Conditions: 150 mM KOAc, 10 mM MgCl2 and 150 mM bicine (pH 8.5), 24 C. An RNA of 177 nucleotides, treated with DMS and 2A3 and read out base by base.
[RMDB]
RNA sequence: GGGAACGACUCGAGUAGAGUCGAAAAUGCUCGGAUGGAACGCCGUACUCGAGCUGCUGGAGGGACGCAGCGUCACCAAACACAGCCUUCGCGGGCUCGUGUACGAGUCAGUGACAGCGGGAGCAGGCCAUAAUUGCGAUUUCGAUCGCAAUUAUGGAAAAGAAACAACAACAACAAC
Reactivity to DMS in 0.01 (KOAc 150mM, MgCl2 10mM, bicine 150mM(pH8.5), 24C), signal-to-noise 4, nucleotides 027 to 126: u010g020c010u000c000g000g010a110u010g010g010a180a030c050g000c020c020g010u000a000c010u000c020g010a010g000c020u000g010c030u010g040g000a050g000g000g010a120c140g010c110a130g010c050g020u000c100a100c160c170a070a100a110c120a070c120a160g010c000c000u000u000c060g000c070g000g000g010c000u000c030g030u000g010u000a020c030g000a080g000u020c070a120g030u000g000a150c030a030g010c040g030g000g010a040g010c000a050g010g010
Reactivity to 2A3 in 0.01 (KOAc 150mM, MgCl2 10mM, bicine 150mM(pH8.5), 24C), signal-to-noise 4, nucleotides 027 to 126: u060g010c000u020c010g060g050a100u030g010g020a030a000c010g000c010c000g000u000a010c000u000c020g000a000g000c010u020g010c060u210g030g030a040g020g030g020a030c060g010c160a130g060c080g090u040c020a100c090c010a050a140a020c100a020c030a050g100c010c000u040u040c050g030c030g040g010g020c000u000c000g000u020g000u000a010c010g040a090g130u180c100a040g010u020g010a010c000a010g000c030g080g100g010a010g020c020a010g040g020

For DMS, 5,080 sequencing reads were counted. 2A3 adducts were read by reverse transcription with SuperScript II with manganese.